[RMDB]
RNA sequence: GGGAACGACUCGAGUAGAGUCGAAAAUACGGUAGUGGAAGAGGUCGGAACUGCCCACCGCCUUGGUUAUGACGGGUUUCUGUCAUACUAUAGCGGCGCGAAGUUGCGUACUUAUUCGAAUGCCAAACAUCCAGAGAAACUUCGGUUUCUCUGGAUGAAAAGAAACAACAACAACAAC
Reactivity to 2A3 in 0.01 (KOAc 150mM, MgCl2 10mM, bicine 150mM(pH8.5), 24C), signal-to-noise 1, nucleotides 027 to 126: u270a030c090g000g000u020a050g130u080g180g000a010a010g030a050g040g000u030c050g000g060a010a010c000u060g030c010c030c000a000c000c010g000c000c010u010u030g020g030u180u100a000u000g000a000c010g030g090g050u090u300u270c020u030g000u010c000a000u010a000c010u020a010u020a030g000c030g030g040c010g020c070g010a040a000g000u010u010g040c000g010u050a030c000u020u030a020u060u000c000g060a080a010u060g020c000c000a020a010a020
Reactivity to DMS in 0.01 (KOAc 150mM, MgCl2 10mM, bicine 150mM(pH8.5), 24C), signal-to-noise 1, nucleotides 027 to 126: u000a080c150g000g000u020a030g010u000g010g000a080a030g000a050g000g000u000c020g010g010a030a010c020u020g010c140c120c030a050c000c000g000c010c030u010u000g000g000u000u020a020u000g000a020c000g020g020g020u000u000u020c040u010g010u010c010a020u000a020c000u000a030u000a130g000c010g010g030c010g020c300g010a120a010g020u000u000g010c000g000u000a020c010u000u000a220u010u020c000g010a060a190u000g020c010c000a080a080a230